[RMDB]
The record gives the reactivity of an RNA of 207 nucleotides to 2A3 and DMS.
The 2A3 profile rests on 2,588 reads.
Conditions: 150 mM KOAc, 10 mM MgCl2 and 150 mM bicine (pH 8.5), 24 C.

RNA sequence: GGGAACGACUCGAGUAGAGUCGAAAAAGUGAGUAUGGCUCGUUACGACGAGCCAUACUCACAACGGUUUUCCUAAAUCGUCGUGAGACGGACCUUGGAAAAACUAGUAUUUAAAUAACUAGGUCAAAUUAGCCUAGAUCCUUCGGGAUCUAGGCAACACGUAUAGUUGGUUCGCCAACUAUACGUGAAAAGAAACAACAACAACAAC
Reactivity to 2A3 in 0.01 (KOAc 150mM, MgCl2 10mM, bicine 150mM(pH8.5), 24C), signal-to-noise 4, nucleotides 027 to 156: a000g010u010g000a000g010u010a000u000g000g000c010u020c030g020u020u060a110c300g010a010c000g000a100g000c000c000a000u010a000c000u000c000a000c000a000a000c000g000g000u000u000u000u000c010c000u020a010a010a010u070c000g000u000c020g010u030g170a130g000a020c010g010g000a010c000c010u040u020g010g010a050a030a030a030a000c020u030a050g070u030a140u130u180u190a120a230a190u200a050a040c100u040a010g020g000u010c010a010a070a240u160u160a070g000c000c000u000a000g000a000u000c000c000u030u110c170g020g000g000a000u000c000u000a000g000g000c000a000a000
Reactivity to DMS in 0.01 (KOAc 150mM, MgCl2 10mM, bicine 150mM(pH8.5), 24C), signal-to-noise 2, nucleotides 027 to 156: a120g030u000g010a060g000u000a020u000g020g000c000u000c040g050u000u000a170c250g000a150c000g060a060g070c010c000a010u000a000c000u000c010a000c050a010a040c070g030g000u000u010u000u010c020c020u000a010a060a040u000c040g000u010c010g010u000g030a300g000a080c010g040g020a020c080c050u000u000g000g010a060a030a030a060a080c030u000a040g030u000a110u000u020u000a100a150a190u000a120a110c020u000a020g010g000u010c090a050a090a140u000u020a070g000c030c010u010a010g000a010u000c000c000u020u010c300g070g000g000a000u010c010u010a020g020g040c010a000a010